This 177-nucleotide RNA was probed chemically with DMS. The reactions ran in a buffer of 150 mM KOAc, 10 mM MgCl2 and 150 mM bicine (pH 8.5), at 24 C.

RNA sequence: GGGAACGACUCGAGUAGAGUCGAAAAGAUAUGGAUCCCGAAGACGCCAAUAUAUCGGAAACGAUAUAUGCAGGAACUACGUCUAAGGGAUCCUAAGUCAAAAGGUCGGUCCUUCGGGACCGACCAACCUAGACUAAAGGUUCGCCUUUAGUCUAGGAAAAGAAACAACAACAACAAC
Reactivity to DMS in 0.01 (KOAc 150mM, MgCl2 10mM, bicine 150mM(pH8.5), 24C), signal-to-noise 4, nucleotides 027 to 126: g000a020u000a300u000g010g010a020u000c000c000c010g000a300a050g000a010c000g000c000c030a100a020u000a010u000a000u000c000g010g010a060a080a210c000g010a010u000a000u000a000u000g010c210a150g010g010a170a090c100u000a300c020g000u000c000u010a040a300g010g000g000a000u000c000c000u000a000a090g000u000c020a070a040a070a140g000g000u000c000g030g000u000c000c020u000u010c170g050g030g010a020c000c010g020a000c000c000a000a010
High DMS reactivity at an A or C suggests that its Watson-Crick edge is free. The data come from the RNA Mapping Database (RMDB), library TTRDEL.